[RMDB]
RNA sequence: GGGAACGACUCGAGUAGAGUCGAAAACGUAGAUACUUCGGUAUCUACGAAAAUAACGCUGGCGUGGGACACAGCCGGAGCUAGCGUCGGAUAGUCUCAGUAAAACAGCAUGGUUCGCCAUGCUGAACUUCCAUACAAUGUUCGCAUUGUAUGGAAGAAAAGAAACAACAACAACAAC
Reactivity to DMS in 0.01 (KOAc 150mM, MgCl2 10mM, bicine 150mM(pH8.5), 24C), signal-to-noise 7, nucleotides 027 to 126: c020g010u000a000g010a000u000a010c000u000u010c170g040g000u000a000u000c000u010a000c000g000a020a040a070a160u000a100a030c030g010c000u000g000g020c020g000u010g010g000g010a130c190a080c300a130g000c010c010g010g000a300g010c010u000a020g010c010g010u000c050g010g010a100u000a090g010u000c010u000c010a150g020u010a040a040a080a170c000a000g000c000a000u000g000g000u000u010c230g010c000c000a000u000g000c000u000g000a030a070
Reactivity to 2A3 in 0.01 (KOAc 150mM, MgCl2 10mM, bicine 150mM(pH8.5), 24C), signal-to-noise 9, nucleotides 027 to 126: c000g000u000a000g000a000u010a000c010u040u050c270g090g000u000a000u000c000u000a000c000g000a000a000a000a010u040a010a000c010g000c020u010g010g000c030g090u290g040g030g080a110c080a030c050a270g150c030c010g050g030a050g000c010u020a000g000c000g010u010c030g070g040a070u040a120g030u010c000u010c040a080g100u240a020a100a050a060c000a000g000c000a000u000g010g040u030u060c180g030c060c000a010u000g000c000u000g000a000a010